[RMDB]
RNA sequence: GGGAACGACUCGAGUAGAGUCGAAAAGAUAUGGAUCUGUAGGGCUUGGAUUUAUACGAGAACUCGGAAACGAGACGUAUUGUCAGCCUGAGGGAUCCUAAGUCAAAGUAACACUUCGGUGUUACAACAUAUCUAGUAACUUCGGUUACUAGAUAUGAAAAGAAACAACAACAACAAC
Reactivity to 2A3 in 0.01 (KOAc 150mM, MgCl2 10mM, bicine 150mM(pH8.5), 24C), signal-to-noise 9, nucleotides 027 to 126: g030a020u080a050u160g010g010a010u000c120u300g040u050a020g000g000g030c060u080u200g150g000a050u240u300u110a020u040a010c020g020a040g110a300a080c010u000c010g000g030a070a070a020c010g010a010g160a080c010g000u010a000u010u010g020u000c010a000g000c000c000u010g000a030g000g000g000a000u000c000c000u000a070a000g010u000c030a050a040a130g000u000a000a000c000a000c020u040u120c300g130g000u000g000u010u000a000c000a000a000
Reactivity to DMS in 0.01 (KOAc 150mM, MgCl2 10mM, bicine 150mM(pH8.5), 24C), signal-to-noise 9, nucleotides 027 to 126: g010a040u000a300u010g010g010a010u000c000u000g000u000a300g000g000g010c010u000u010g020g010a020u000u010u000a010u000a010c000g000a110g010a120a110c000u000c000g010g000a100a080a190c010g010a010g020a100c000g010u000a000u000u000g000u000c010a030g000c000c000u000g000a130g010g000g000a010u000c000c000u000a020a090g000u000c040a100a120a140g000u000a000a010c000a010c000u000u010c190g020g010u000g010u000u000a000c000a120a240
The data come from the RNA Mapping Database (RMDB), library TTRDEL. This 177-nucleotide RNA was probed chemically with 2A3 and DMS. DMS adducts were read by reverse transcription with MarathonRT. Conditions: 150 mM KOAc, 10 mM MgCl2 and 150 mM bicine (pH 8.5), 24 C.